[RMDB]
Notes: Chemical mapping of a 207-nucleotide RNA with 2A3 and DMS. Reactivities are given for positions 27 through 156.
RNA sequence: GGGAACGACUCGAGUAGAGUCGAAAAGCUCAUUUCCUUUUUAAACUGGAAGCCAUCUAUUUCACAGCUUGACUGUAACUGUGGCCUGCACAAGUACGACAAAUCCAUACUGGAGGAGUUUGAUGACAGGGUUGUCAUGAAUGUACUGUCAAGUGAAUAUGGCUAGUAGUUUCGACUACUAGCCAUAAAAAGAAACAACAACAACAAC
Reactivity to 2A3 in 0.01 (KOAc 150mM, MgCl2 10mM, bicine 150mM(pH8.5), 24C), signal-to-noise 2, nucleotides 027 to 156: g040c010u020c030a040u010u060u010c030c000u160u220u070u070u240a120a090a080c080u070g030g020a050a000g080c060c050a070u060c120u170a300u100u220u150c100a090c010a060g020c020u030u000g000a070c040u040g020u010a030a010c000u010g000u010g060g040c000c000u030g000c030a020c000a130a040g050u110a050c020g000a020c050a000a040a030u000c020c010a040u130a270c080u160g000g030a000g000g010a010g000u000u080u130g120a050u030g030a060c000a010g000g000g080u130u180g050u110c010a000u010g040a080a000u120g050u210a010c000u010g000u000c000a000a010g010u010g090a030a010
Reactivity to DMS in 0.01 (KOAc 150mM, MgCl2 10mM, bicine 150mM(pH8.5), 24C), signal-to-noise 1, nucleotides 027 to 156: g010c030u010c040a170u010u010u000c010c010u040u000u000u040u060a020a080a080c180u000g040g010a100a090g070c020c060a070u000c110u000a090u000u000u010c070a070c070a140g050c000u000u010g010a150c030u000g000u010a070a080c000u000g050u000g000g030c080c020u010g000c040a140c070a040a080g010u000a080c070g030a120c000a040a140a130u000c080c060a090u000a060c190u000g010g010a070g000g010a300g010u020u000u010g020a060u000g000a080c030a050g000g000g070u000u000g010u020c020a040u000g020a110a100u000g000u000a050c040u000g010u010c010a100a150g020u000g000a020a230
Source: RMDB library OK3TST, as collected in RNAgym. High 2A3 reactivity points to a flexible backbone, as in loops and unpaired stretches. For DMS, 2,004 sequencing reads were counted.